[RMDB]
The record gives the reactivity of an RNA of 177 nucleotides to 2A3 and DMS. Source: RMDB library OK1LIB, as collected in RNAgym. DMS adducts were read by reverse transcription with MarathonRT. The DMS profile rests on 97,110 reads.
RNA sequence: GGGAACGACUCGAGUAGAGUCGAAAAGUGCGAUGUCGAGUGUAGCUUACAAUCUUUGCGGUGUUAUUGCGGAAGAAUAUCGGUGUUGGACCAGUUUCCAUACGUAGGACAAAGAUACAUCGCUGAAGAUACUGUAUCAUUUCGAUGGUACAGUAUCAAAAGAAACAACAACAACAAC
Reactivity to 2A3 in 0.01 (KOAc 150mM, MgCl2 10mM, bicine 150mM(pH8.5), 24C), signal-to-noise 9, nucleotides 027 to 126: g110u070g000c020g010a030u020g020u070c050g020a030g030u080g030u060a020g030c010u020u030a020c040a050a070u040c030u080u090u110g300c030g010g010u060g030u090u080a070u050u070g040c020g030g020a040a010g030a070a050u080a080u160c050g030g010u110g040u110u080g030g020a010c010c020a070g030u030u140u020c020c000a030u050a120c040g030u050a050g000g060a030c020a030a090a000g020a000u040a010c000a010u000c010g000c000u020g020a030a010
Reactivity to DMS in 0.01 (KOAc 150mM, MgCl2 10mM, bicine 150mM(pH8.5), 24C), signal-to-noise 9, nucleotides 027 to 126: g010u010g010c010g010a020u010g010u000c090g000a090g020u010g020u010a070g020c070u010u000a040c070a080a050u010c020u010u000u010g010c040g010g010u010g010u020u020a060u020u010g010c100g000g000a080a080g000a060a060u020a070u020c070g000g010u020g010u010u010g000g010a070c050c080a120g010u010u000u000c010c010a050u020a090c060g010u010a060g000g000a100c050a030a050a040g000a060u010a020c010a010u000c010g010c010u010g010a110a090